[RMDB]
RNA sequence: GGGAACGACUCGAGUAGAGUCGAAAAAACACCUCAAGAAGAGGAGACUUCCCCAAGGGUAGGUGGAACGCCAGGGAACAAGGAAAUAGGAGAAGGAACGGUAGAAAAGAGCGAGCCCUCCGAUCCGAUACUCUCACGUUCGCGUGAGAGAAAAGAAACAACAACAACAAC
Reactivity to DMS in 0.01 (KOAc 150mM, MgCl2 10mM, bicine 150mM(pH8.5), 24C), signal-to-noise 6, nucleotides 027 to 129: a080a080c190a110c000c000u010c040a070a050g060a100a090g030a030g060g000a000g040a080c080u010u000c030c010c010c060a090a040g010g000g010u050a020g030g040u050g010g000a060a040c100g040c120c050a090g040g010g040a020a030c090a000a150g040g000a020a060a090u060a110g040g010a040g030a090a020g010g020a030a060c090g000g040u060a000g000a090a070a070a030g000a090g000c040g020a100g030c000c000c000u010c040c000g020a080u030c040c040g030a000u080a130
Reactivity to 2A3 in 0.01 (KOAc 150mM, MgCl2 10mM, bicine 150mM(pH8.5), 24C), signal-to-noise 6, nucleotides 027 to 129: a000a000c090a040c000c010u030c020a040a110g120a050a000g000a070g010g010a010g040a010c000u050u050c040c000c000c000a080a060g060g000g010u060a030g030g060u070g030g020a050a030c050g010c020c010a000g030g000g000a020a010c030a020a030g060g030a050a030a010u120a070g010g020a040g000a040a030g030g010a060a020c040g010g010u070a030g110a050a110a040a000g040a010g020c020g020a000g010c000c000c000u000c000c010g010a030u000c000c010g000a020u080a070